[RMDB]
An RNA of 177 nucleotides, treated with DMS and 2A3 and read out base by base. It was measured as part of the RMDB library OK2TRN. For DMS, 941 sequencing reads were counted.
RNA sequence: GGGAACGACUCGAGUAGAGUCGAAAACGGUACACAUGCUAGGCCAUGUACGCUAGCAUGAUCACAUGCAUGGAUCACGACUAGUAGUGAUCUGAUCGAUCCACGGAUCGAUCCGGUACAUGUCUCCGCGUGAUCGACGUUUCGACGUCGAUCACGCAAAAGAAACAACAACAACAAC
Reactivity to DMS in 0.01 (KOAc 150mM, MgCl2 10mM, bicine 150mM(pH8.5), 24C), signal-to-noise 1, nucleotides 027 to 126: c070g010g010u000a040c070a150c050a000u000g000c030u010a080g000g000c020c040a020u000g030u000a040c180g000c070u010a080g000c000a000u000g000a050u000c040a060c150a170u000g000c060a060u000g010g000a040u000c000a000c030g000a190c260u000a200g010u020a080g010u020g000a040u000c000u000g000a000u000c000g000a000u000c000c010a120c300g010g000a000u000c000g000a000u000c000c130g020g010u000a020c000a030u000g010u000c000u010c000c260
Reactivity to 2A3 in 0.01 (KOAc 150mM, MgCl2 10mM, bicine 150mM(pH8.5), 24C), signal-to-noise 2, nucleotides 027 to 126: c040g030g080u070a000c070a000c010a030u020g010c000u030a020g050g000c040c020a030u040g010u050a050c080g000c090u040a010g000c000a000u000g030a070u070c090a070c010a150u130g070c020a090u110g000g010a000u020c010a010c030g190a100c130u170a080g230u030a010g010u050g020a000u040c020u030g000a000u000c000g000a000u000c050c000a070c200g060g000a000u000c000g020a000u000c000c020g070g000u020a010c020a010u020g050u020c060u020c050c050